[RMDB]
RNA sequence: GGGAACGACUCGAGUAGAGUCGAAAAGAGAAAUCGAGUUUUGCAAGUGAUCAUAACAUUGGAGUAAUAUUUCUUGAGUGGGGGCAGCACAAAGUAUAUUAUCCAUAUAAUGAAUAAUGUAACACUGCCGAUUAGGCAAUUUCGAUUGCCUAAUCGGAAAAGAAACAACAACAACAAC
Reactivity to DMS in 0.01 (KOAc 150mM, MgCl2 10mM, bicine 150mM(pH8.5), 24C), signal-to-noise 2, nucleotides 027 to 126: g020a060g020a060a120a070u000c040g020a100g000u000u000u000u000g010c030a100a090g000u010g020a110u000c090a060u010a070a070c080a090u000u010g000g020a070g000u000a050a060u010a050u000u000u000c030u010u000g010a210g020u000g010g000g010g000g020c010a020g040c040a030c060a090a020a060g010u000a030u010a020u000u010a010u010c000c000a030u000a100u010a100a060u000g000a020a050u010a040a030u010g000u010a030a030c080a040c110u010g000
Reactivity to 2A3 in 0.01 (KOAc 150mM, MgCl2 10mM, bicine 150mM(pH8.5), 24C), signal-to-noise 2, nucleotides 027 to 126: g130a020g010a030a090a050u130c140g000a140g050u040u040u110u060g040c040a090a080g030u020g150a130u060c040a020u040a170a060c020a050u010u050g040g000a040g060u050a020a060u020a050u060u160u050c050u080u100g080a130g020u040g000g070g000g000g000c040a010g000c010a010c010a040a050a000g010u030a000u000a010u040u010a000u000c000c000a060u130a040u030a180a020u050g020a010a030u150a100a040u100g020u000a060a010c040a000c030u050g020

An RNA of 177 nucleotides, treated with DMS and 2A3 and read out base by base. For DMS, 1,318 sequencing reads were counted. Values are in units of 0.01, from 0 to 300, in steps of 10. The RNA was probed in 150 mM KOAc, 10 mM MgCl2 and 150 mM bicine (pH 8.5) at 24 C. The 2A3 profile rests on 1,058 reads.